[RMDB]
RNA sequence: GGGAACGACUCGAGUAGAGUCGAAAAAACGCGAUUCAACCUUAAUAGGAUAUGCUAAACACUGCCGUUUGAAGUCUGUUUAGAAGAAACUUAAUCAAACUAGCAUCAUGUUGGUUGUUUAUCACUUUUCAUGAUGCGAAACCUAUCGAUAAACUACCAUGACUAUUUCGUUCGCGAAAUAGUCAUGAAAAGAAACAACAACAACAAC
Reactivity to 2A3 in 0.01 (KOAc 150mM, MgCl2 10mM, bicine 150mM(pH8.5), 24C), signal-to-noise 8, nucleotides 027 to 156: a000a010c170g030c080g080a100u170u130c080a080a090c010c020u170u180a140a070u140a270g030g000a030u040a030u160g000c000u000a010a000a000c010a000c000u010g000c010c030g010u000u000u010g010a010a000g010u010c010u000g010u010u010u010a020g000a070a020g050a070a170a030c120u170u130a040a020u050c010a000a000a010c000u010a010g000c000a000u000c000a000u000g010u030u040g030g000u000u020g000u000u010u000a010u010c000a000c010u170u170u070u020c000a000u000g000a000u000g000c000g000a000a000a000c030c050u170a160u220c040g000a000u000a000a010a000c010u010a040c000
Reactivity to DMS in 0.01 (KOAc 150mM, MgCl2 10mM, bicine 150mM(pH8.5), 24C), signal-to-noise 2, nucleotides 027 to 156: a100a060c050g000c070g000a080u000u000c070a080a150c020c040u000u000a020a130u000a050g020g060a140u000a270u000g000c020u010a040a020a040c020a030c060u010g000c030c030g000u010u010u000g000a100a050g010u000c110u000g030u000u000u000a040g010a100a120g000a130a020a060c160u000u000a030a120u000c020a020a030a050c020u010a200g000c010a010u000c030a000u000g020u000u000g010g020u000u000g000u000u000u000a100u010c040a030c040u010u000u000u000c010a010u000g010a050u020g030c010g000a060a010a070c120c080u000a000u000c050g000a070u000a020a030a030c020u000a140c120
An RNA of 207 nucleotides, treated with 2A3 and DMS and read out base by base. For 2A3, 8,163 sequencing reads were counted. Source: RMDB library ARCHII, as collected in RNAgym. DMS adducts were read by reverse transcription with MarathonRT.